[RMDB]
An RNA of 207 nucleotides, treated with DMS and 2A3 and read out base by base. The data come from the RNA Mapping Database (RMDB), library OK3TST.
RNA sequence: GGGAACGACUCGAGUAGAGUCGAAAACAAAGAAAACCAACAAAAACCAGAACAUACAUAUGUCUCAACUACACAUGGCACAUUCACCAAGAACACCAGUCUUAAUACUUUUAAAAGGACUACAGUCACACAGACUGUGUUCUCUGACUGUAGUGCAACUUCCAUUAAAGUUCGCUUUAAUGGAAGUAAAAGAAACAACAACAACAAC
Reactivity to DMS in 0.01 (KOAc 150mM, MgCl2 10mM, bicine 150mM(pH8.5), 24C), signal-to-noise 3, nucleotides 027 to 156: c040a100a110a190g000a120a070a120a130c070c050a080a190c060a020a110a050a110a060c070c030a130g000a070a040c070a060u000a070c050a060u000a050u010g000u000c070u010c000a070a120c030u000a040c020a030c020a040u000g010g020c040a050c080a080u000u010c020a060c000c010a060a120g000a080a080c010a010c050c010a080g000u000c010u010u000a090a080u000a090c050u000u010u020u010a030a090a140a170g010g020a070c010u000a030c000a010g010u000c000a070c100a130c150a090g000a020c020u000g000u010g000u000u000c010u010c020u000g000a020c010u010g000u000a020g010u000g060c010a060
Reactivity to 2A3 in 0.01 (KOAc 150mM, MgCl2 10mM, bicine 150mM(pH8.5), 24C), signal-to-noise 9, nucleotides 027 to 156: c030a000a140a030g100a050a110a020a020c060c030a020a070c060a030a140a040a010a010c050c030a050g030a110a040c030a050u190a040c030a040u160a080u160g030u030c030u020c080a060a110c040u120a020c050a000c010a100u060g020g000c020a020c010a080u070u050c020a020c050c020a050a040g050a090a010c030a010c040c030a010g030u010c020u030u090a090a080u120a190c040u070u100u090u220a050a160a020a050g060g010a000c000u020a010c020a010g000u000c010a010c000a010c010a080g030a060c040u120g060u050g030u230u010c040u000c010u030g000a000c010u010g000u010a000g000u000g000c000a010

The DMS profile rests on 5,036 reads. Conditions: 150 mM KOAc, 10 mM MgCl2 and 150 mM bicine (pH 8.5), 24 C. For 2A3 the reverse transcriptase was SuperScript II with manganese. For 2A3, 10,535 sequencing reads were counted.